Structure probing data (2A3 and DMS) for a 177-nucleotide construct. For 2A3, 1,665 sequencing reads were counted. The reactions ran in a buffer of 150 mM KOAc, 10 mM MgCl2 and 150 mM bicine (pH 8.5), at 24 C. Source: RMDB library OK2TST, as collected in RNAgym. Values cover nucleotides 27 to 126. 2A3 adducts were read by reverse transcription with SuperScript II with manganese. DMS adducts were read by reverse transcription with MarathonRT.
RNA sequence: GGGAACGACUCGAGUAGAGUCGAAAAAGUGCAUUGAUGCUGGUCAUGAGGUCCGCACUCUCGUGAAAUUGAGCUGUGGGACAAACGAGACUGACAAUCCUGGGCACAUAGUGGCAUGGGGAGUAGGGAAUGGGAGCAGUUUCGACUGCUCCCAUUCAAAAGAAACAACAACAACAAC
Reactivity to 2A3 in 0.01 (KOAc 150mM, MgCl2 10mM, bicine 150mM(pH8.5), 24C), signal-to-noise 2, nucleotides 027 to 126: a000g030u050g010c040a060u110u140g050a070u120g060c080u060g000g030u020c010a020u050g040a040g060g050u020c010c000g150c000a000c000u040c000u000c000g060u090g130a170a110a130u080u090g010a000g000c080u010g030u050g010g000g010a010c000a000a020a010c120g000a090g000a040c030u080g010a030c010a010a030u040c000c010u010g030g060g000c020a020c010a060u140a010g180u190g080g000c070a060u030g020g030g010g000a080g020u040a070g080g080
Reactivity to DMS in 0.01 (KOAc 150mM, MgCl2 10mM, bicine 150mM(pH8.5), 24C), signal-to-noise 2, nucleotides 027 to 126: a070g030u000g020c010a140u000u010g000a090u010g020c020u000g020g030u000c020a080u020g010a160g000g020u000c020c010g000c060a040c020u000c020u000c050g020u010g010a080a070a170u010u020g010a070g040c280u000g010u000g000g000g010a040c010a040a050a150c140g010a020g000a070c070u000g000a050c060a070a090u000c040c070u000g010g000g010c000a060c080a110u000a070g000u010g030g000c060a080u010g010g020g010g000a060g010u000a030g020g020